[RMDB]
RNA sequence: GGGAACGACUCGAGUAGAGUCGAAAACAGCGUUUCCGGUGCGUUUCGUCACGCAGCGCGGUCAGGCGGGCCGCCGCCAGCGGGUGAUCAAUGACGUGGACUUCCACAUGGGUGACCCUAUAUAACAAGCCAUAUGGUACUUCGGUACCAUAUGGCUAAAAGAAACAACAACAACAAC
Reactivity to 2A3 in 0.01 (KOAc 150mM, MgCl2 10mM, bicine 150mM(pH8.5), 24C), signal-to-noise 2, nucleotides 027 to 126: c010a030g080c040g050u030u060u040c010c050g030g040u030g010c000g000u150u060u060c080g050u000c080a050c100g010c000a000g050c000g000c000g050g010u090c130a070g060g210c090g020g010g000c000c000g020c010c000g020c000c020a020g000c020g000g030g000u040g030a030u060c060a020a180u210g020a040c070g030u060g020g060a000c050u180u140c070c000a090c000a170u100g020g010g040u060g000a140c000c000c000u070a050u160a020u020a250a090c130a180
Reactivity to DMS in 0.01 (KOAc 150mM, MgCl2 10mM, bicine 150mM(pH8.5), 24C), signal-to-noise 1, nucleotides 027 to 126: c110a180g000c100g000u020u020u000c000c000g000g000u010g000c020g000u000u000u000c200g000u000c010a120c090g000c070a000g020c110g010c040g000g020u000c110a100g060g000c150g030g000g000c000c270g000c000c000g000c000c000a140g000c140g090g030g000u000g000a050u000c030a070a050u000g000a020c000g010u020g000g030a190c060u000u090c000c040a000c000a020u050g000g030g000u020g010a280c030c000c000u000a000u110a180u010a030a160c130a200